Chemical mapping of a 177-nucleotide RNA with 2A3 and DMS.
[RMDB]
RNA sequence: GGGAACGACUCGAGUAGAGUCGAAAAAGCAUCUUUCGACCAGCGAUCAGUAAGUCCACCAGAUUGGGAUUAAUCUUCAAAAGUUGCAACUUAAAUAUUCCCAGUAAUGUCCACCUACAAGGAGCCUGCCUAUAAUAACGUUCGCGUUAUUAUAGGCAAAAGAAACAACAACAACAAC
Reactivity to 2A3 in 0.01 (KOAc 150mM, MgCl2 10mM, bicine 150mM(pH8.5), 24C), signal-to-noise 6, nucleotides 027 to 126: a010g070c010a030u020c030u030u040u040c020g060a040c020c050a000g040c010g030a060u050c000a020g060u100a170a000g040u040c010c000a020c010c020a060g060a240u090u120g030g020g000a010u030u100a070a050u050c060u160u050c070a090a080a000a040g040u060u050g060c030a070a010c030u120u190a040a080a070u150a090u050u010c000c000c000a010g020u060a030a120u090g040u050c010c010a030c030c020u130a120c070a140a050g050g000a030g030c000c030u030
Reactivity to DMS in 0.01 (KOAc 150mM, MgCl2 10mM, bicine 150mM(pH8.5), 24C), signal-to-noise 3, nucleotides 027 to 126: a070g030c080a070u000c030u000u010u000c050g000a080c050c020a140g010c060g020a070u010c020a070g030u000a090a130g000u010c030c010a090c090c050a070g010a090u010u030g000g000g000a040u000u030a040a080u010c070u000u010c100a080a030a090a070g010u000u010g000c050a080a120c100u000u010a040a060a090u020a120u000u000c020c000c000a160g000u000a030a050u000g000u000c010c020a090c020c020u020a030c140a080a070g020g010a110g030c060c090u010
Values cover nucleotides 27 to 126. Conditions: 150 mM KOAc, 10 mM MgCl2 and 150 mM bicine (pH 8.5), 24 C.